[RMDB]
RNA sequence: GGGAACGACUCGAGUAGAGUCGAAAAUGCUCUUGGAUCAAGAUGAUGAACAAAAGAAUUAAUUGGUAAAUAUCGCCCUAUAAUCAAUUUAUUUUUCAUGUUGCCACUCCUUAUACAAGCUUACAAAACACAUAAGUUGUUUCGACAACUUAUGUGUAAAAGAAACAACAACAACAAC
Reactivity to 2A3 in 0.01 (KOAc 150mM, MgCl2 10mM, bicine 150mM(pH8.5), 24C), signal-to-noise 3, nucleotides 027 to 126: u130g010c010u030c010u020u060g070g010a080u220c050a020a070g000a070u080g020a040u150g030a110a050c070a050a110a020a030g030a040a010u060u030a010a040u000u040g000g010u050a100a180a110u070a070u110c020g040c010c000c000u020a060u020a080a030u030c000a000a030u000u010u000a050u000u050u050u010u060c020a040u070g020u050u020g050c010c000a030c030u010c030c010u030u020a040u030a110c070a060a000g040c010u030u010a030c040a010a110a060
Reactivity to DMS in 0.01 (KOAc 150mM, MgCl2 10mM, bicine 150mM(pH8.5), 24C), signal-to-noise 4, nucleotides 027 to 126: u000g000c060u000c020u000u000g020g010a060u010c090a050a060g010a060u020g010a130u000g000a070a060c070a060a120a070a070g010a030a030u000u010a010a030u000u000g000g020u000a040a080a100u000a080u000c150g000c040c030c030u000a100u000a120a020u000c020a010a010u000u000u000a020u000u000u000u000u000c080a080u010g010u000u000g010c100c050a050c070u000c020c020u000u000a080u010a080c100a020a050g010c110u000u010a070c150a070a050a110

Source information
An RNA of 177 nucleotides, treated with 2A3 and DMS and read out base by base. For 2A3, 3,307 sequencing reads were counted. Reactivities are given for positions 27 through 126. Conditions: 150 mM KOAc, 10 mM MgCl2 and 150 mM bicine (pH 8.5), 24 C. For DMS, 4,359 sequencing reads were counted. Source: RMDB library OK2TRN, as collected in RNAgym.